The record gives the reactivity of an RNA of 177 nucleotides to 2A3 and DMS.
High DMS reactivity at an A or C suggests that its Watson-Crick edge is free.
The reactions ran in a buffer of 150 mM KOAc, 10 mM MgCl2 and 150 mM bicine (pH 8.5), at 24 C.
For DMS, 40,785 sequencing reads were counted.
RNA sequence: GGGAACGACUCGAGUAGAGUCGAAAAGAACGAGUUCAGCCCAUUUCGUAGAUCCAUUCCUCGGCUGAACUCGUAGGCCUUGUGAACGAGGAAGGAAUGGAUCUACGAAAUGUUCACAAGGCCAAGACUACUCGGAUCUAUUCGUAGAUUCGAGUAGAAAAGAAACAACAACAACAAC
Reactivity to 2A3 in 0.01 (KOAc 150mM, MgCl2 10mM, bicine 150mM(pH8.5), 24C), signal-to-noise 5, nucleotides 027 to 126: g050a010a000c010g000a000g000u000u000c000a000g000c000c020c020a010u010u010u000c000g000u000a010g010a130u040c030c020a080u040u030c000c000u000c000g000g000c000u000g000a000a000c000u000c000g000u010a030g000g000c000c000u000u000g000u000g000a000a000c010g000a000g000g010a020a010g030g090a030a020u100g100g060a090u000c000u000a000c000g000a000a000a010u020g000u000u000c000a000c000a000a000g000g000c000c000a010a000g010a010
Reactivity to DMS in 0.01 (KOAc 150mM, MgCl2 10mM, bicine 150mM(pH8.5), 24C), signal-to-noise 9, nucleotides 027 to 126: g000a150a030c010g000a020g010u000u000c010a020g000c030c010c070a020u000u000u000c000g010u000a040g000a130u000c060c030a110u000u000c000c000u000c050g000g000c020u000g000a020a020c000u000c000g020u000a010g020g020c010c000u000u000g010u000g010a010a010c010g020a020g010g010a070a050g010g010a110a150u010g000g000a090u000c010u000a010c010g010a010a010a010u000g000u000u000c010a020c010a010a020g000g010c010c010a020a020g010a220